Chemical mapping of a 207-nucleotide RNA with 2A3 and DMS. DMS adducts were read by reverse transcription with MarathonRT.
[RMDB]
RNA sequence: GGGAACGACUCGAGUAGAGUCGAAAAGGUGCCUCGAUAAUAAAGUAUGCAUUAAAGAUAAACGCAGAAGAUAAUUUUGCAUUAGCAGCUUAAUUUAGCGCUGCUCAUCCUUCCUCAAUUGCCCACGGUUGAGAGUAAGGGUGUCAUUUAAAAGUGGGUAGUGAUAGUAGUUCGCUACUAUCACUACAAAAGAAACAACAACAACAAC
Reactivity to 2A3 in 0.01 (KOAc 150mM, MgCl2 10mM, bicine 150mM(pH8.5), 24C), signal-to-noise 8, nucleotides 027 to 156: g050g010u040g030c010c010u050c050g030a070u110a230a040u110a070a180a030g080u090a050u090g020c010a030u060u130a120a140a020g080a090u110a080a110a020c090g000c050a020g020a090a010g030a080u140a150a150u110u090u070u120g000c020a020u040u060a020g000c010a000g000c020u080u160a110a080u300u210u190a150g020c020g000c030u010g000c010u010c000a010u010c000c000u000u010c000c000u000c000a000a000u000u010g000c000c000c000a000c000g000g000u000u000g000a010g000a010g020u190a000a010g000g000g000u010g000u000c010a010u010u160u230a080a120a020a010g010u000g000g000
Reactivity to DMS in 0.01 (KOAc 150mM, MgCl2 10mM, bicine 150mM(pH8.5), 24C), signal-to-noise 3, nucleotides 027 to 156: g020g020u000g020c000c030u000c060g010a150u000a080a100u000a060a070a120g000u000a040u000g020c050a100u000u010a050a100a160g010a160u010a070a030a070c110g010c030a050g010a030a040g020a130u000a060a140u000u020u000u000g030c030a090u010u000a040g010c020a060g010c030u000u000a060a110u010u000u000a090g000c140g020c010u010g000c010u000c020a040u000c000c010u000u000c020c000u000c010a020a020u000u010g030c010c010c060a060c080g000g010u000u000g000a040g010a120g010u000a020a030g010g050g020u010g000u000c050a080u010u000u000a050a050a110a060g030u000g000g030